An RNA of 207 nucleotides, treated with 2A3 and read out base by base. The reactions ran in a buffer of 150 mM KOAc, 10 mM MgCl2 and 150 mM bicine (pH 8.5), at 24 C. Reactivities are given for positions 27 through 156. For 2A3 the reverse transcriptase was SuperScript II with manganese.

RNA sequence: GGGAACGACUCGAGUAGAGUCGAAAAAGGCACUCCAUACCCUACUCCGACUCAAUACGUCCCCGUCAUACAGAAUGGUAACAUAUCUCUCCAAAUAUCUGAGCUUGGGUAUACGGGGAAACCCAACAAAAGCAAUUGUGGUUCGCCACAAUUGCAACACGUCCUUAUCCUUCGGGAUAAGGACGUGAAAAGAAACAACAACAACAAC
Reactivity to 2A3 in 0.01 (KOAc 150mM, MgCl2 10mM, bicine 150mM(pH8.5), 24C), signal-to-noise 2, nucleotides 027 to 156: a020g040g020c030a000c080u080c000c000a060u170a180c010c000c000u010a050c040u050c020c020g090a080c050u020c060a100a060u090a210c030g080u020c000c000c000c000g010u000c010a030u030a080c010a030g050a070a060u040g020g060u120a130a010c040a050u140a190u030c040u030c020u000c030c060a130a130a070u230a170u080c090u080g020a010g050c050u080u130g030g000g000u000a000u010a020c000g000g000g010g000a000a020a000c000c020c000a030a030c040a050a070a010a000g000c000a000a000u000u000g000u000g020g040u050u090c100g040c050c000a000c000a000a000u000u000g000c000a000a000